This 177-nucleotide RNA was probed chemically with DMS.
The reactions ran in a buffer of 150 mM KOAc, 10 mM MgCl2 and 150 mM bicine (pH 8.5), at 24 C.
It was measured as part of the RMDB library RFMREP.
RNA sequence: GGGAACGACUCGAGUAGAGUCGAAAACGCAGAGGGUUCUGAUAACAAAGAACCUAGAUAGCCGCAUCGGUAUUAUAGGAUGUAGUCGGUGAGCCGGAAUGCCUGCAUCGUAAGCCUAUAAGUAAAUUAUAUGAACAGGGUUCGCCCUGUUCAUAUAAAAAGAAACAACAACAACAAC
Reactivity to DMS in 0.01 (KOAc 150mM, MgCl2 10mM, bicine 150mM(pH8.5), 24C), signal-to-noise 1, nucleotides 027 to 126: c130g010c090a060g020a210g020g010g000u000u000c000u000g030a060u000a120a140c300a100a230a000g000a010a000c000c000u000a030g000a080u000a110g020c070c030g000c120a090u010c100g010g030u000a030u000u000a010u000a040g010g000a050u000g030u000a060g010u030c030g000g000u000g000a080g010c050c020g000g040a140a160u000g000c050c050u020g010c030a040u000c020g000u000a030a090g000c000c000u000a020u000a000a060g030u000a040a020a140u020